RNA sequence: GGGAACGACUCGAGUAGAGUCGAAAAGUGGAGCCAUGGGAUCCUCUUCCCGAUGUCCGAUCAAUUCCCUCCCCCCGAGGGUCGCCCAGGAAUGGCGGGACCCCACUCAACUGGGGUCCGCGUUCCAGAUAGAAGGAGAGUUCGCUCUCCUUCUAUCAAAAGAAACAACAACAACAAC
Reactivity to 2A3 in 0.01 (KOAc 150mM, MgCl2 10mM, bicine 150mM(pH8.5), 24C), signal-to-noise 1, nucleotides 027 to 126: g040u050g020g020a060g070c080c050a140u130g080g020g010a050u080c020c080u010c140u070u000c000c030c000g050a060u100g030u010c010c020g040a050u140c120a080a300u160u120c000c010c020u010c010c000c010c020c000c010g000a070g000g000g000u020c010g000c000c000c000a020g040g070a040a030u210g300g300c170g030g020g010a040c000c000c000c020a020c020u180c030a140a220c100u040g000g000g000g000u010c020c000g030c020g000u000u010c000c000a010
Reactivity to DMS in 0.01 (KOAc 150mM, MgCl2 10mM, bicine 150mM(pH8.5), 24C), signal-to-noise 3, nucleotides 027 to 126: g020u000g000g010a070g000c090c040a100u000g010g000g000a030u010c120c110u010c090u000u000c000c000c000g020a070u000g000u000c020c020g000a100u010c110a110a260u010u000c000c010c000u000c010c010c000c000c010c010g020a090g000g000g010u000c040g000c000c000c020a130g010g000a020a020u000g010g030c010g000g010g000a010c000c010c000c000a000c030u000c300a090a110c170u010g000g000g000g010u000c000c000g010c010g000u000u000c000c000a110

An RNA of 177 nucleotides, treated with 2A3 and DMS and read out base by base.
The reactions ran in a buffer of 150 mM KOAc, 10 mM MgCl2 and 150 mM bicine (pH 8.5), at 24 C.
For DMS the reverse transcriptase was MarathonRT.
For 2A3 the reverse transcriptase was SuperScript II with manganese.